An RNA of 177 nucleotides, treated with 2A3 and DMS and read out base by base. The data come from the RNA Mapping Database (RMDB), library OK2TRN. The reactions ran in a buffer of 150 mM KOAc, 10 mM MgCl2 and 150 mM bicine (pH 8.5), at 24 C.
RNA sequence: GGGAACGACUCGAGUAGAGUCGAAAAUUCGUCGUCGCGAUGCGCGAAGGCCAUCCGCUCGCGGGUGCGCGGCGGCUCGCCGAGCUGCUCGACGCCGAGUGGAUCGUCACGGUCGGCGCCGAUCACAAUGCACCCCACUAUUCGUAGUGGGGUGCAUAAAAGAAACAACAACAACAAC
Reactivity to 2A3 in 0.01 (KOAc 150mM, MgCl2 10mM, bicine 150mM(pH8.5), 24C), signal-to-noise 1, nucleotides 027 to 126: u090u030c100g000u000c000g000u000c000g010c020g110a150u180g160c120g000c030g110a060a090g040g010c000c010a070u060c020c010g000c020u030c000g000c120g000g040g000u160g120c060g000c050g040g000c030g020g000c020u000c020g300c050c120g010a000g000c010u020g010c020u020c040g070a080c000g000c030c010g000a000g030u000g000g010a020u040c030g030u020c020a040c060g040g010u020c020g010g070c000g030c050c010g010a020u070c040a020c020a160
Reactivity to DMS in 0.01 (KOAc 150mM, MgCl2 10mM, bicine 150mM(pH8.5), 24C), signal-to-noise 1, nucleotides 027 to 126: u010u000c030g020u000c000g030u000c040g000c070g020a100u000g030c100g050c040g020a070a110g000g010c070c120a070u000c000c010g000c010u000c040g000c150g040g030g040u010g020c030g030c060g020g030c000g000g000c030u010c100g000c170c100g020a050g010c020u010g030c080u000c020g020a100c050g030c050c000g010a050g000u010g000g000a060u000c290g000u000c030a120c070g010g000u010c010g020g010c050g020c000c000g010a060u000c110a090c100a100